[RMDB]
RNA sequence: GGGAACGACUCGAGUAGAGUCGAAAACGGAUGUCGUUCAUCACCGAUCCGACCGGCGCUGCCGUGGGCCUAUGGCAGGCCAAUCGGCACAUCGGAGCGACGUUGGUCAACGAGACGGGCACGCUCAUCCUGGUAUUGACUUCGGUCAAUACCAGGAAAAAGAAACAACAACAACAAC
Reactivity to DMS in 0.01 (KOAc 150mM, MgCl2 10mM, bicine 150mM(pH8.5), 24C), signal-to-noise 1, nucleotides 027 to 126: c050g010g010a060u000g040u000c000g020u010u000c190a080u000c040a100c080c010g000a090u000c020c000g000a110c040c040g010g030c000g030c260u000g000c000c010g020u000g000g010g050c010c020u000a130u000g000g040c230a090g010g010c040c000a030a070u000c010g020g000c260a020c070a060u000c000g000g000a110g000c250g030a040c030g010u000u010g000g010u010c080a030a060c050g000a100g030a030c060g000g000g010c060a030c150g010c070u000c020a160
Reactivity to 2A3 in 0.01 (KOAc 150mM, MgCl2 10mM, bicine 150mM(pH8.5), 24C), signal-to-noise 1, nucleotides 027 to 126: c060g040g040a080u040g000u090c000g000u040u010c050a050u100c020a060c050c060g020a110u000c010c000g000a040c000c000g000g010c090g000c040u020g000c000c000g040u000g040g080g070c030c000u150a200u230g230g090c040a040g010g000c000c000a000a120u100c010g030g090c020a000c030a050u110c040g060g010a030g100c010g000a050c030g020u000u030g050g000u030c040a020a080c090g050a010g110a120c000g000g000g100c050a020c050g000c000u000c040a030